Source: RMDB library OK2TST, as collected in RNAgym. The record gives the reactivity of an RNA of 177 nucleotides to DMS and 2A3. For DMS the reverse transcriptase was MarathonRT. The 2A3 profile rests on 859 reads. For 2A3 the reverse transcriptase was SuperScript II with manganese.

RNA sequence: GGGAACGACUCGAGUAGAGUCGAAAAAGAGCUUCGCUAUGAGGACUGGAAACAGACCGUCACCUGUGCCGGGAGGCAGGCCGGCGCGGUGGCCAGCAUCGCUCCGGCAGCGCCUGUUGCCGCCUCCAGUUAGCGUGGUUUUCGAACCACGCUAACUAAAAGAAACAACAACAACAAC
Reactivity to DMS in 0.01 (KOAc 150mM, MgCl2 10mM, bicine 150mM(pH8.5), 24C), signal-to-noise 1, nucleotides 027 to 126: a090g010a070g010c060u010u000c100g020c120u020a050u000g000a130g040g020a120c080u000g030g000a080a040a100c080a000g000a100c010c040g010u000c030a080c090c100u020g000u000g000c010c030g000g030g030a110g000g010c010a050g010g000c020c000g010g000c070g020c020g000g050u000g000g020c070c160a050g000c030a010u000c090g010c030u000c000c010g030g020c010a040g010c080g040c100c010u000g000u000u000g000c010c040g000c000c000u010c050c180
Reactivity to 2A3 in 0.01 (KOAc 150mM, MgCl2 10mM, bicine 150mM(pH8.5), 24C), signal-to-noise 1, nucleotides 027 to 126: a000g150a060g030c060u090u080c060g020c030u110a060u120g020a070g010g040a060c100u160g030g020a090a150a010c000a010g040a080c000c040g050u040c010a040c070c030u100g010u040g050c010c000g110g050g010a040g080g110c080a040g070g100c030c010g020g000c000g000c010g000g040u010g030g090c150c040a030g080c010a030u040c010g020c010u020c000c030g000g000c010a010g060c020g050c010c010u110g040u030u010g040c020c000g000c020c020u030c010c040